An RNA of 177 nucleotides, treated with 2A3 and DMS and read out base by base. The DMS profile rests on 1,595 reads. The reactions ran in a buffer of 150 mM KOAc, 10 mM MgCl2 and 150 mM bicine (pH 8.5), at 24 C.
[RMDB]
RNA sequence: GGGAACGACUCGAGUAGAGUCGAAAACUUGACUGGGCUAAACAGUCAAGAGGCUACAAUCUUGAUCGAAUAGCCCGAUCAAGAAAAUGUGCAGUGUUUGAGCGAGAAGCUCAAGCACUGCAUAAAAAUACUCACGUAGCUUCGGCUACGUGAGUAUAAAAGAAACAACAACAACAAC
Reactivity to 2A3 in 0.01 (KOAc 150mM, MgCl2 10mM, bicine 150mM(pH8.5), 24C), signal-to-noise 2, nucleotides 027 to 126: c000u000u000g000a020c030u050g000g000g050c030u040a030a080a020c010a010g020u000c000a000a000g000a000g050g040c150u280a120c100a050a100u010c000u000u010g000a000u030c010g030a070a050u030a050g000c000c000c010g020a040u000c000a000a000g040a020a140a000a050u120g000u000g000c000a000g000u010g020u000u000u000g000a000g000c020g030a110g110a260a070g070c000u010c000a000a000g000c000a000c000u000g000c000a000u000a000a000a000a000
Reactivity to DMS in 0.01 (KOAc 150mM, MgCl2 10mM, bicine 150mM(pH8.5), 24C), signal-to-noise 1, nucleotides 027 to 126: c000u000u000g010a030c000u000g000g000g010c000u000a040a080a290c010a010g000u000c020a010a000g000a040g010g060c070u010a060c300a100a140u010c000u000u000g000a000u010c050g000a080a150u000a020g000c090c000c000g060a040u020c000a000a060g000a090a100a080a040u000g000u000g000c020a000g000u000g000u000u000u010g000a010g100c050g000a230g000a140a170g010c000u030c000a070a000g040c000a000c000u000g000c000a000u000a000a020a120a120